Source: RMDB library OK1LIB, as collected in RNAgym. Structure probing data (2A3) for a 177-nucleotide construct.
RNA sequence: GGGAACGACUCGAGUAGAGUCGAAAAGAAGAGAAUAUCGGUGUAAGUGCAGCCCGUCUUACACCGUAAGGCACAGCGGAAACGCUGAUGUCAAAUACAGGGCUGCGAGACGGAAGUAGACCGUCAACCAUGACGCGGUGUUCGCACCGCGUCAUGGAAAAGAAACAACAACAACAAC
Reactivity to 2A3 in 0.01 (KOAc 150mM, MgCl2 10mM, bicine 150mM(pH8.5), 24C), signal-to-noise 1, nucleotides 027 to 126: g130a000a020g120a000g040a040a170u100a000u300c000g000g010u000g010u000a010a020g000u010g040c000a000g000c000c000c000g060u000c040u060u030a000c000a000c000c000g000u030a060a090g000g000c010a000c000a000g000c010g080g050a010a060a030c000g050c000u040g020a080u010g000u000c030a040a090a000u070a030c120a020g000g000g000c010u000g020c020g000a090g000a000c000g040g000a000a090g050u210a070g000a010c000c000g000u000c030a010a010
Conditions: 150 mM KOAc, 10 mM MgCl2 and 150 mM bicine (pH 8.5), 24 C. Values cover nucleotides 27 to 126. The 2A3 profile rests on 1,108 reads.